[RMDB]
RNA sequence: GGGAACGACUCGAGUAGAGUCGAAAAGAACAUGCGUUCGCGCAUGUUCAAAUAAAAUCAGCGGUAAUCGACGCGUAAAUAUUACCGCUGAACGCCUCGAUAAAAGAGCUGGCUUCGGCCAGCUCAAGCUCCUAGUAAAGUUCGCUUUACUAGGAGCAAAAGAAACAACAACAACAAC
Reactivity to DMS in 0.01 (KOAc 150mM, MgCl2 10mM, bicine 150mM(pH8.5), 24C), signal-to-noise 1, nucleotides 027 to 126: g020a010a000c000a000u010g010c000g030u000u000c240g040c000g030c000a010u010g000u000u000c000a010a070a020u000a060a060a080a120u000c000a000g000c000g010g010u000a020a000u000c180g010a090c140g000c210g030u000a040a090a130u000a080u000u000a000c010c010g000c000u000g000a010a040c100g000c000c010u000c200g010a110u000a050a030a150a110g000a010g020c000u010g000g000c030u000u000c200g000g070c000c000a000g000c040u000c000a000a040
Reactivity to 2A3 in 0.01 (KOAc 150mM, MgCl2 10mM, bicine 150mM(pH8.5), 24C), signal-to-noise 1, nucleotides 027 to 126: g000a010a000c000a010u010g030c000g010u060u080c130g030c000g000c130a000u000g010u000u000c000a040a010a000u080a010a040a010a080u040c000a000g010c000g030g000u020a000a010u040c060g060a090c030g140c080g290u060a050a210a000u140a030u030u010a010c010c000g000c020u000g000a010a000c010g020c000c010u050c080g050a100u130a300a210a040a070g000a010g000c030u010g030g000c030u060u060c230g050g000c000c020a040g040c000u000c020a000a000
This 177-nucleotide RNA was probed chemically with DMS and 2A3. 2A3 adducts were read by reverse transcription with SuperScript II with manganese. For DMS the reverse transcriptase was MarathonRT. The RNA was probed in 150 mM KOAc, 10 mM MgCl2 and 150 mM bicine (pH 8.5) at 24 C. For DMS, 958 sequencing reads were counted.